An RNA of 207 nucleotides, treated with 2A3 and DMS and read out base by base. For DMS, 7,726 sequencing reads were counted. Source: RMDB library OK3TST, as collected in RNAgym. The 2A3 profile rests on 5,282 reads.
RNA sequence: GGGAACGACUCGAGUAGAGUCGAAAAUUAAUGGCUACAGAGUUUCAGUUAGGGGUGAUGGAGAAGUUCUGGAGAUGGGCGGUGGUGACGGCCGGCCGCACAGCAAUAUGACGUGCUUAAUGCCACUGAACUGUGCACUGAACAUCGUUAAGGUGGAUAUGAUUACGUAUUUCGAUACGUAAUCAUAAAAAGAAACAACAACAACAAC
Reactivity to 2A3 in 0.01 (KOAc 150mM, MgCl2 10mM, bicine 150mM(pH8.5), 24C), signal-to-noise 6, nucleotides 027 to 156: u110u080a060a070u100g020g010c020u080a030c040a020g030a030g040u050u050u080c030a040g020u070u140a060g000g010g000g010u060g020a050u070g010g030a060g010a070a040g030u050u050c050u090g050g020a080g010a070u060g010g010g010c030g010g010u040g000g030u030g030a040c040g040g000c000c000g010g000c020c020g000c000a020c000a030g040c030a050a060u090a080u300g070a050c060g020u060g030c000u040u130a090a060u180g020c010c000a020c030u020g020a050a030c020u030g010u010g010c020a020c070u060g030a060a040c020a060u090c030g050u070u080a080a000g020g020u020g020g010a010
Reactivity to DMS in 0.01 (KOAc 150mM, MgCl2 10mM, bicine 150mM(pH8.5), 24C), signal-to-noise 3, nucleotides 027 to 156: u000u000a100a080u000g000g020c030u020a080c070a100g030a100g000u000u000u010c040a120g000u000u000a100g020g020g010g020u010g010a100u000g010g010a080g010a100a070g000u000u000c050u000g010g020a110g010a100u000g000g010g030c010g030g030u000g010g030u000g010a080c060g000g010c050c030g010g020c020c050g020c010a070c030a030g000c020a030a180u020a060u010g020a030c030g040u010g020c140u000u010a060a080u000g010c000c010a040c010u000g000a130a040c020u000g010u000g020c010a090c030u010g010a050a050c010a040u010c040g010u000u010a060a140g030g020u000g010g010a230